[RMDB]
RNA sequence: GGGAACGACUCGAGUAGAGUCGAAAAGAUAUGGAACGCGAAGAACAUGGUGUACGAAGAACUCGGAAACGAGGGAGUACUCAUGGGAGCGUUCCUAAGUCAAAACGUCCUGCUUCGGCAGGACGAAGAAUUUAAGUUAGUUCGCUAACUUAAAUUCAAAAGAAACAACAACAACAAC
Reactivity to 2A3 in 0.01 (KOAc 150mM, MgCl2 10mM, bicine 150mM(pH8.5), 24C), signal-to-noise 6, nucleotides 027 to 126: g020a020u070a050u150g000g000a010a000c010g050c030g180a300a090g030a100a030c010a010u030g040g090u230g150u090a000c010g130a300a090g010a080a040c000u010c020g010g040a060a050a050c000g000a010g000g000g020a020g000u000a000c010u010c010a010u000g000g000g020a040g000c000g000u000u000c000c000u000a010a010g030u010c020a010a010a060a150c010g000u000c000c000u010g000c010u040u060c170g150g000c010a010g000g010a000c000g000a000a010
Reactivity to DMS in 0.01 (KOAc 150mM, MgCl2 10mM, bicine 150mM(pH8.5), 24C), signal-to-noise 7, nucleotides 027 to 126: g010a030u000a300u010g010g010a010a000c010g010c000g000a140a140g000a100a170c010a010u000g010g020u010g020u000a010c000g000a100a150g000a120a180c000u000c010g000g000a110a080a180c010g010a020g000g000g000a080g010u000a000c000u000c000a010u000g000g000g000a120g000c000g000u000u000c000c010u000a010a060g010u010c050a050a060a090a200c030g000u000c000c000u000g000c000u000u010c210g010g000c000a000g000g000a010c000g010a020a040